Record summary
The record gives the reactivity of an RNA of 177 nucleotides to 2A3 and DMS.

[RMDB]
RNA sequence: GGGAACGACUCGAGUAGAGUCGAAAAACGUCCUUACGAGGACGAAUCCUCUUUGGCCGAGUGGUUCUCAACAGUUCAACAGUUCUUUUGAUGAUUGUGAAAUGUUCAGGACCACUUGAUCAGACAACCUUAUAUUUCAUUUCGAUGAAAUAUAAGGAAAAGAAACAACAACAACAAC
Reactivity to 2A3 in 0.01 (KOAc 150mM, MgCl2 10mM, bicine 150mM(pH8.5), 24C), signal-to-noise 9, nucleotides 027 to 126: a000c010g000u010c000c000u040u030a110c290g110a020g000g000a000c000g000a000a030u020c000c010u050c060u090u070u040g020g000c010c000g000a000g000u000g010g000u010u000c010u000c010a000a000c000a010g020u020u010c020a070a070c000a080g030u060u070c080u110u300u270u300g200a260u190g010a010u030u030g010u000g010a010a010a020u010g000u000u010c020a000g000g000a000c000c000a000c000u000u000g000a000u000c000a000g090a090c050a050a070
Reactivity to DMS in 0.01 (KOAc 150mM, MgCl2 10mM, bicine 150mM(pH8.5), 24C), signal-to-noise 9, nucleotides 027 to 126: a020c000g010u000c000c000u000u010a110c200g020a040g010g010a010c010g000a020a020u010c010c000u010c290u010u010u000g000g010c070c000g010a000g020u000g000g010u000u000c000u000c180a020a010c020a020g000u000u000c010a080a040c010a010g010u000u000c080u010u020u010u020g000a130u010g000a030u000u000g010u000g000a010a030a020u000g010u000u000c280a020g000g000a010c010c000a010c010u000u000g010a020u000c010a030g010a100c300a080a160

2A3 adducts were read by reverse transcription with SuperScript II with manganese. Conditions: 150 mM KOAc, 10 mM MgCl2 and 150 mM bicine (pH 8.5), 24 C.